The record gives the reactivity of an RNA of 177 nucleotides to DMS and 2A3. For 2A3, 917 sequencing reads were counted. The RNA was probed in 150 mM KOAc, 10 mM MgCl2 and 150 mM bicine (pH 8.5) at 24 C. The DMS profile rests on 1,732 reads.
[RMDB]
RNA sequence: GGGAACGACUCGAGUAGAGUCGAAAAUUUAACAUUUUGCAGGCGACAACUGCUAAUGUCAGUGCACUUAUGGGUGCUAAUGGCAACAAGAUUGUUGACAAAGAAGUUAAAGACAUGCAGUUUGAUUAUUAAGAAGUUGGUUCGCCAACUUCUUAAUAAAAGAAACAACAACAACAAC
Reactivity to DMS in 0.01 (KOAc 150mM, MgCl2 10mM, bicine 150mM(pH8.5), 24C), signal-to-noise 2, nucleotides 027 to 126: u000u000u010a060a070c020a070u010u000u010u000g020c150a250g010g000c040g000a030c080a030a030c030u000g000c070u010a080a140u000g000u010c000a050g010u000g000c010a010c010u010u000a120u000g010g020g030u000g030c010u010a040a090u000g000g010c000a010a050c070a060a150g020a170u000u000g010u000u000g010a080c050a040a100a060g000a060a050g000u000u010a020a020a060g010a100c120a060u000g010c080a060g010u000u000u000g000a250u000u020
Reactivity to 2A3 in 0.01 (KOAc 150mM, MgCl2 10mM, bicine 150mM(pH8.5), 24C), signal-to-noise 1, nucleotides 027 to 126: u010u020u020a030a010c000a000u070u080u000u090g020c070a020g070g070c010g030a030c020a070a010c020u030g030c040u060a100a030u000g000u000c000a000g040u000g060c010a000c000u100u170a120u210g240g000g050u010g000c000u050a120a070u010g010g000c020a010a010c020a050a000g040a240u040u070g010u020u040g020a000c020a030a030a020g070a020a010g000u100u130a000a020a010g020a010c010a020u090g010c000a010g020u050u060u100g020a030u000u030